[RMDB]
RNA sequence: GGGAACGACUCGAGUAGAGUCGAAAAGAUGAGAAUACGUGACUUGGUCAGAGGCGGAAAGCCACAAGCACGAACGAUGCAGUAGAGUAUCGAUCCGCCAACAGAUGCACGUUGUGAUCGUGCUAGAAUAAUUUAGCGAGUUCGCUCGCUAAAUUAUAAAAGAAACAACAACAACAAC
Reactivity to DMS in 0.01 (KOAc 150mM, MgCl2 10mM, bicine 150mM(pH8.5), 24C), signal-to-noise 7, nucleotides 027 to 126: g010a070u040g000a080g010a120a070u020a050c030g020u010g010a110c020u010u010g010g030u010c100a080g010a220g010g010c000g010g000a040a100a150g010c030c040a080c180a050a170g020c020a050c090g010a090a170c060g000a020u000g010c020a170g010u030a070g010a160g020u010a020u000c030g000a120u010c030c010g000c000c030a080a110c170a100g010a090u030g010c040a030c060g010u010u020g000u010g010a080u010c060g000u010g010c020u000a050g000a210
Reactivity to 2A3 in 0.01 (KOAc 150mM, MgCl2 10mM, bicine 150mM(pH8.5), 24C), signal-to-noise 6, nucleotides 027 to 126: g080a080u210g060a050g040a160a110u110a080c020g010u010g080a140c020u010u030g040g000u090c090a030g010a060g180g000c010g010g150a250a060a010g010c000c020a040c020a030a010g010c000a000c050g010a060a020c030g010a010u040g000c020a030g090u300a050g110a030g060u030a030u060c000g020a050u000c000c010g020c010c030a090a050c030a060g100a070u190g010c010a000c020g020u070u090g130u110g080a060u120c000g000u020g000c000u010a010g100a140
An RNA of 177 nucleotides, treated with DMS and 2A3 and read out base by base. The 2A3 profile rests on 4,187 reads. The reactions ran in a buffer of 150 mM KOAc, 10 mM MgCl2 and 150 mM bicine (pH 8.5), at 24 C.